Structure probing data (DMS and 2A3) for a 207-nucleotide construct. Conditions: 150 mM KOAc, 10 mM MgCl2 and 150 mM bicine (pH 8.5), 24 C. For 2A3 the reverse transcriptase was SuperScript II with manganese. The data come from the RNA Mapping Database (RMDB), library M2RFPK.

RNA sequence: GGGAACGACUCGAGUAGAGUCGAAAAGUCUCCUAGAGAGCUUGGCCGUCGGGCCUUACACCCCGACUUGCUGAGUUUCUCUAGGAGAGUCCCUUUCCCAGCCAGAGGUGGCUGAUCAAACAAUACCAAAACUCUUGCUAGUUCGCUAGCAAGAGAAGAUGAAUAUUAGGUUCGCCUAAUAUUCAUCAAAAGAAACAACAACAACAAC
Reactivity to DMS in 0.01 (KOAc 150mM, MgCl2 10mM, bicine 150mM(pH8.5), 24C), signal-to-noise 2, nucleotides 027 to 156: g000u010c000u010c010c010u010a040g010a010g010a060g010c010u010u000g010g000c000c300g010u000c030g040g030g020c070c070u000u010a110c260a180c300c010c000c000g020a060c010u000u000g000c000u020g010a070g020u000u000u000c000u010c000u000a040g000g000a010g020a000g000u000c020c000c020u000u000u010c110c090c000a040g060c040c030a020g000a300g000g000u000g040g010c010u000g000a110u000c070a030a090a080c100a040a050u000a040c000c000a060a140a130a130c000u000c000u010u000g000c000u000a010g000u000u020c300g010c000u000a020g010c010a010a000g000a030g030a020a060
Reactivity to 2A3 in 0.01 (KOAc 150mM, MgCl2 10mM, bicine 150mM(pH8.5), 24C), signal-to-noise 4, nucleotides 027 to 156: g020u000c000u000c000c000u000a010g000a000g000a000g000c000u010u020g020g000c000c010g010u010c000g000g020g020c010c030u060u090a100c080a050c030c000c000c000g000a000c020u110u300g000c010u010g010a010g000u020u260u010c000u000c000u000a000g000g000a000g000a000g000u000c000c000c000u020u100u020c010c010c010a000g000c010c000a010g000a010g020g000u010g000g010c000u010g140a190u180c050a000a030a050c080a060a070u010a010c000c000a020a030a090a120c000u000c000u000u000g000c000u010a010g030u070u040c190g030c100u000a000g000c000a000a000g010a000g000a000a020